Chemical mapping of a 177-nucleotide RNA with 2A3 and DMS. 2A3 adducts were read by reverse transcription with SuperScript II with manganese. The data come from the RNA Mapping Database (RMDB), library M2PK50. For DMS, 2,329 sequencing reads were counted.
[RMDB]
RNA sequence: GGGAACGACUCGAGUAGAGUCGAAAAGGAUCACUCUUCGGAGUGAUCCAAACAUCGUAAACGCAGACACCAUGAAAGAUCGAAAAACGAUCAAAGCGAAAAAAACCCUCGACUUCGGUCGAGGGAACAUUGUAAAACUCUUCGGAGUUUUACAAUGAAAAGAAACAACAACAACAAC
Reactivity to 2A3 in 0.01 (KOAc 150mM, MgCl2 10mM, bicine 150mM(pH8.5), 24C), signal-to-noise 2, nucleotides 027 to 126: g010g000a000u020c020a000c010u000c000u050u070c220g030g000a000g000u000g000a000u010c000c000a000a000a000c000a030u040c000g110u090a050a030a090c020g000c010a010g050a080c030a050c100c010a020u070g060a110a100a050g000a000u020c010g090a090a100a070a080a140c010g000a010u020c010a040a040a010g050c020g060a130a010a020a000a010a050a100c000c000c000u000c000g010a010c000u030u040c180g060g000u000c000g010a000g000g000g000a000a000
Reactivity to DMS in 0.01 (KOAc 150mM, MgCl2 10mM, bicine 150mM(pH8.5), 24C), signal-to-noise 3, nucleotides 027 to 126: g010g000a010u000c000a000c010u000c000u000u000c200g010g000a010g000u010g000a000u010c000c000a010a060a090c130a120u010c090g030u000a030a060a130c050g000c020a160g010a080c140a120c040c050a070u000g010a090a050a080g010a020u010c010g010a080a110a040a150a190c020g000a020u010c020a040a070a120g010c040g010a020a000a060a090a070a130a100c010c000c000u000c000g000a010c000u010u010c220g020g000u000c000g000a010g000g000g000a000a030